[RMDB]
RNA sequence: GGGAACGACUCGAGUAGAGUCGAAAAAGAUUUCCGGGGCUAAAACUUACUACCGAAGCUACGGCAUCAGUAAUGAUGGGUAGGGGAGCUUCCCAUACGGGUUGAAGCAUGACCGUAAGGACAUGUGGCAUAGGCUCCCAUUCGUGGGAGCCUAUGCAAAAGAAACAACAACAACAAC
Reactivity to DMS in 0.01 (KOAc 150mM, MgCl2 10mM, bicine 150mM(pH8.5), 24C), signal-to-noise 1, nucleotides 027 to 126: a010g000a260u000u060u000c000c040g030g030g000g000c150u060a110a010a100a050c050u000u050a150c020u010a000c030c060g000a090a140g050c110u030a030c000g050g010c030a130u000c060a010g000u170a210a120u000g000a030u000g000g000g010u000a100g010g000g040g020a250g110c040u000u000c000c000c000a160u030a030c100g000g030g020u100u000g030a150a160g040c020a000u000g070a160c030c000g000u100a040a050g000g000a120c000a000u000g000u000g010
Reactivity to 2A3 in 0.01 (KOAc 150mM, MgCl2 10mM, bicine 150mM(pH8.5), 24C), signal-to-noise 1, nucleotides 027 to 126: a000g090a060u020u000u000c020c010g000g000g030g000c060u030a000a000a120a120c010u150u090a060c040u020a070c010c020g060a070a000g090c020u100a060c030g060g000c020a060u050c020a050g100u070a250a030u090g060a010u000g000g000g060u060a130g000g000g000g010a000g000c000u030u000c030c000c000a180u110a140c110g000g070g000u030u080g000a010a000g020c020a000u010g040a050c020c020g170u070a060a110g000g030a040c000a000u000g080u030g030